[RMDB]
Conditions: 150 mM KOAc, 10 mM MgCl2 and 150 mM bicine (pH 8.5), 24 C. An RNA of 177 nucleotides, treated with 2A3 and DMS and read out base by base. The DMS profile rests on 1,836 reads. Values cover nucleotides 27 to 126. DMS adducts were read by reverse transcription with MarathonRT. The data come from the RNA Mapping Database (RMDB), library TTRDES.
RNA sequence: GGGAACGACUCGAGUAGAGUCGAAAAGAUAUGGAGUCCGUCCACUACCCACCUCUAACCAUCGGAAACGAUGGCUAGAGAGGUGGAGCGGACUCCUAAGUCAAACAUUACUGUUCGCAGUAAUGAAGUGUUAUCAACAGUUCGCUGUUGAUAACACAAAAGAAACAACAACAACAAC
Reactivity to 2A3 in 0.01 (KOAc 150mM, MgCl2 10mM, bicine 150mM(pH8.5), 24C), signal-to-noise 2, nucleotides 027 to 126: g060a040u120a080u170g000g010a010g000u010c020c020g010u030c030c020a040c060u200a150c050c090c040a080c000c040u000c010u030a030a030c000c010a010u000c000g050g000a100a000a040c020g010a010u000g010g000c000u010a010g000a000g040a030g020g040u030g040g010a030g120c030g000g000a010c010u010c000c000u010a050a000g020u050c010a070a070a040c010a000u000u010a010c010u000g140u130u120c300g000c170a000g000u000a020a000u050g050a160a050
Reactivity to DMS in 0.01 (KOAc 150mM, MgCl2 10mM, bicine 150mM(pH8.5), 24C), signal-to-noise 3, nucleotides 027 to 126: g000a080u000a300u010g020g010a030g000u000c000c020g080u000c000c010a060c020u000a100c100c080c120a300c170c010u000c000u010a010a020c000c020a030u000c000g000g010a160a060a180c010g020a010u010g000g000c010u000a020g000a010g010a040g000g000u020g000g000a080g030c000g000g000a000c000u000c000c010u000a030a100g010u000c070a220a120a300c000a000u000u010a000c000u000g020u000u020c250g020c020a000g000u000a000a000u000g010a080a130